An RNA of 177 nucleotides, treated with DMS and 2A3 and read out base by base. For DMS the reverse transcriptase was MarathonRT. Conditions: 150 mM KOAc, 10 mM MgCl2 and 150 mM bicine (pH 8.5), 24 C. The DMS profile rests on 30,986 reads.

RNA sequence: GGGAACGACUCGAGUAGAGUCGAAAAGUGCUUGAGCACUGUCGUUGCGACGAGAGUUCGAUGAUGUCGAUCCGGAUUUUUUUUUUUUUCCGGAAAGCAUUUGCUCUCUUUGUGCUCUUGCACGAAAGGGACAGGCGAGCUUCGGCUUGCUUGUCCCAAAAGAAACAACAACAACAAC
Reactivity to DMS in 0.01 (KOAc 150mM, MgCl2 10mM, bicine 150mM(pH8.5), 24C), signal-to-noise 5, nucleotides 027 to 126: g010u000g000c010u000u000g010a010g020c000a010c000u020g000u000c020g010u050u030g020c080g000a030c040g010a010g000a010g020u020u040c240g010a060u010g000a000u000g000u050c020g000a290u000c010c000g000g000a000u000u000u000u000u000u000u000u010u020u000u010u010u000c000c000g000g000a010a090a210g000c000a000u000u000u000g000c030u000c000u000c000u010u020u030g010u000g010c000u010c010u000u010g010c000a010c020g000a040a050a080
Reactivity to 2A3 in 0.01 (KOAc 150mM, MgCl2 10mM, bicine 150mM(pH8.5), 24C), signal-to-noise 9, nucleotides 027 to 126: g010u000g000c000u000u010g000a000g000c000a010c020u030g010u010c070g170u210u300g200c130g010a010c020g000a000g000a010g010u080u280c150g050a150u190g010a010u020g180u250c020g020a040u010c000c000g010g000a010u020u000u000u010u010u000u000u000u010u000u000u120u000c000c000g000g000a000a010a000g000c000a000u010u020u110g000c000u000c000u010c000u080u080u100g000u000g000c000u000c000u000u000g000c000a000c000g000a030a010a010